[RMDB]
RNA sequence: GGGAACGACUCGAGUAGAGUCGAAAAAAAGAUAUGGAUCGAAUUGUCAGUCCAACUAUGUGAGGGAUCGGAAACGAUCCUCCCCACCACAUAUUUGGACUUGGAUUUAUUCGAUCCUAAGUCAAAACUAUAGUAGCACGUUCGCGUGCUACUAUAGAAAAGAAACAACAACAACAAC
Reactivity to DMS in 0.01 (KOAc 150mM, MgCl2 10mM, bicine 150mM(pH8.5), 24C), signal-to-noise 2, nucleotides 027 to 126: a040a070a040g010a060u020a300u010g010g000a010u000c020g000a020a030u000u000g000u000c010a060g010u000c000c000a010a050c080u010a000u000g020u000g000a230g000g010g000a000u000c010g010g000a090a100a180c020g020a020u010c000c000u010c030c010c040c020a300c090c000a000c000a000u000a010u000u000u000g000g000a010c000u000u000g000g000a010u020u000u000a010u000u000c010g020a000u000c000c000u000a010a060g010u020c020a170a060a120a170
Reactivity to 2A3 in 0.01 (KOAc 150mM, MgCl2 10mM, bicine 150mM(pH8.5), 24C), signal-to-noise 1, nucleotides 027 to 126: a010a030a000g060a000u060a020u160g000g010a000u010c010g000a000a010u000u030g030u030c020a010g000u020c000c010a010a010c010u000a000u010g010u020g000a030g020g000g000a010u020c030g000g000a120a060a050c000g040a010u000c030c000u030c000c000c000c000a030c000c010a010c000a000u040a040u010u030u010g000g020a010c010u010u180g050g040a020u250u300u140a040u030u040c000g000a000u020c000c000u000a060a000g000u000c000a000a000a140a220